An RNA of 207 nucleotides, treated with 2A3 and DMS and read out base by base. The reactions ran in a buffer of 150 mM KOAc, 10 mM MgCl2 and 150 mM bicine (pH 8.5), at 24 C. Source: RMDB library OK3TST, as collected in RNAgym. For DMS the reverse transcriptase was MarathonRT.
[RMDB]
RNA sequence: GGGAACGACUCGAGUAGAGUCGAAAAGGGAGUGUGCAAGGCCAGACAUAGAGAUUCAAGAGUCGUCGGCAGGACCGGCUCCAAGAGUGUAUGCCCUGCAGCUGCUCAGAGUCUGGCUCUUACAAGAGUCAGCACUUGCUUGGAUGUUCUGCCCAGACUGAGGUAAAAUAUUCGUAUUUUACCUCAGAAAAGAAACAACAACAACAAC
Reactivity to 2A3 in 0.01 (KOAc 150mM, MgCl2 10mM, bicine 150mM(pH8.5), 24C), signal-to-noise 3, nucleotides 027 to 156: g080g010g000a040g020u130g000u050g040c020a040a040g020g010c070c050a050g020a070c030a020u230a040g080a010g030a050u080u110c060a110a010g000a030g020u010c010g010u030c060g010g030c000a010g000g000a010c010c020g040g000c000u000c010c010a040a030g050a000g030u070g010u050a080u210g010c030c010c010u050g000c050a030g020c000u140g020c020u050c090a030g000a010g060u010c010u010g010g000c010u000c000u000u080a070c070a060a040g000a000g010u000c000a000g020c050a020c000u030u090g020c020u060u070g080g010a050u050g040u020u010c010u010g010c020c010c000a030g020a040
Reactivity to DMS in 0.01 (KOAc 150mM, MgCl2 10mM, bicine 150mM(pH8.5), 24C), signal-to-noise 1, nucleotides 027 to 156: g000g000g000a060g010u000g000u000g020c100a030a050g020g020c010c050a150g020a080c060a140u010a140g010a200g000a110u000u000c060a150a170g010a010g020u000c020g020u010c030g040g010c060a070g030g010a150c060c090g030g000c030u010c010c060a020a120g000a060g020u000g010u010a070u000g020c000c020c000u020g020c050a160g000c020u010g000c000u000c030a180g000a070g000u010c020u020g000g000c000u000c000u000u010a130c230a130a170g000a050g030u020c010a030g020c060a060c040u020u020g020c020u000u030g020g000a150u010g010u010u000c020u000g000c000c010c050a070g000a290